Source: RMDB library RNAMAK, as collected in RNAgym. Structure probing data (DMS and 2A3) for a 207-nucleotide construct. The reactions ran in a buffer of 150 mM KOAc, 10 mM MgCl2 and 150 mM bicine (pH 8.5), at 24 C.
RNA sequence: GGGAACGACUCGAGUAGAGUCGAAAACAAGGAUUCGUCCUUGAACAGCGUACUACAGAAAGUGCCAGAGUUUCGCUACCCACCGACAUCCCAAAUAGGAUGUCGAGGCGAUGCUCGGUAAUACUUUCUGUAUCGCCUCGUCUUGGUUCGCCAAGACAGGACAAAAUAGCUUCGGCUAUUUUGUCCUAAAAGAAACAACAACAACAAC
Reactivity to DMS in 0.01 (KOAc 150mM, MgCl2 10mM, bicine 150mM(pH8.5), 24C), signal-to-noise 1, nucleotides 027 to 156: c010a020a040g040g000a060u000u020c220g000u000c020c000u000u000g000a020a130c080a100g020c010g040u030a080c150u000a030c000a000g000a030a010a000g060u020g050c060c010a230g060a050g030u000u010u000c010g040c010u010a090c040c010c030a300c210c000g010a030c000a020u000c000c000c000a020a200a110u000a080g010g010a070u010g010u010c010g000a000g000g000c010g010a000u000g000c000u000c000g000g000u000a010a080u000a090c010u000u000u000c000u010g030u010a010u020c050g000c010c000u000c110g030u000c000u010u000g000g000u000u000c300g020c010c010a000a040g010a010c030
Reactivity to 2A3 in 0.01 (KOAc 150mM, MgCl2 10mM, bicine 150mM(pH8.5), 24C), signal-to-noise 4, nucleotides 027 to 156: c000a010a010g000g010a010u080u130c240g070u010c130c000u000u030g060a090a060c030a050g000c010g070u110a090c060u000a010c020a000g010a000a000a000g010u010g050c030c060a080g030a010g030u010u020u020c010g000c010u030a120c070c040c050a020c020c010g000a000c000a000u050c040c030c080a190a300a110u300a180g010g000a010u000g000u000c010g000a010g000g000c000g000a000u010g020c000u010c010g100g000u160a170a080u140a120c000u000u000u000c000u000g000u010a010u130c010g000c000c030u070c050g020u000c000u000u020g020g000u040u050c180g040c070c010a010a000g000a000c020